[RMDB]
RNA sequence: GGGAACGACUCGAGUAGAGUCGAAAAAAAAUAUCAGAUUGGCACCUCUUAGAUGUAAAUAUCUAUGGCAUAUUGAGGUUUUACGUGAAAAGAUGGUAUUUGUUCAGUAGCCUAUUUCCAAAUGCUAACCAGUCGACUUCAGAAUAUGCAAGUAUUACCAGUCAGUAAAUUUCGAUUUACUGACUGGAAAAGAAACAACAACAACAAC
Reactivity to DMS in 0.01 (KOAc 150mM, MgCl2 10mM, bicine 150mM(pH8.5), 24C), signal-to-noise 2, nucleotides 027 to 156: a080a030a070a100u010a060u000c030a050g030a130u000u000g010g010c040a100c040c060u000c040u000u000a040g010a090u010g000u000a070a040a080u000a030u000c040u000a110u000g020g050c020a060u000a100u000u000g000a090g000g000u000u000u000u000a070c090g000u000g020a110a090a080a110g030a170u000g000g010u000a270u010u000u000g000u000u010c030a120g000u010a120g000c020c040u000a100u000u000u000c050c010a040a020a120u000g050c010u000a100a080c020c040a060g030u000c040g010a070c080u000u000c060a150g010a050a050u000a030u000g010c040a070a100g010u000a040u020u000a190
Reactivity to 2A3 in 0.01 (KOAc 150mM, MgCl2 10mM, bicine 150mM(pH8.5), 24C), signal-to-noise 1, nucleotides 027 to 156: a000a000a000a000u140a060u070c100a090g060a110u050u100g010g000c030a060c030c050u010c000u020u040a060g010a040u010g050u180a010a130a060u060a030u000c030u050a100u030g060g000c010a030u020a020u080u040g040a040g010g030u030u000u030u060a000c000g050u020g080a020a030a050a060g110a080u060g020g030u020a080u120u040u110g040u110u030c040a080g030u030a000g000c000c030u050a110u040u080u010c030c010a010a020a020u060g040c010u010a020a060c020c000a010g030u060c030g070a010c050u030u020c050a050g000a120a030u050a060u120g040c040a030a030g020u010a060u010u040a090
Source: RMDB library OK3TST, as collected in RNAgym. Chemical mapping of a 207-nucleotide RNA with DMS and 2A3. Values cover nucleotides 27 to 156.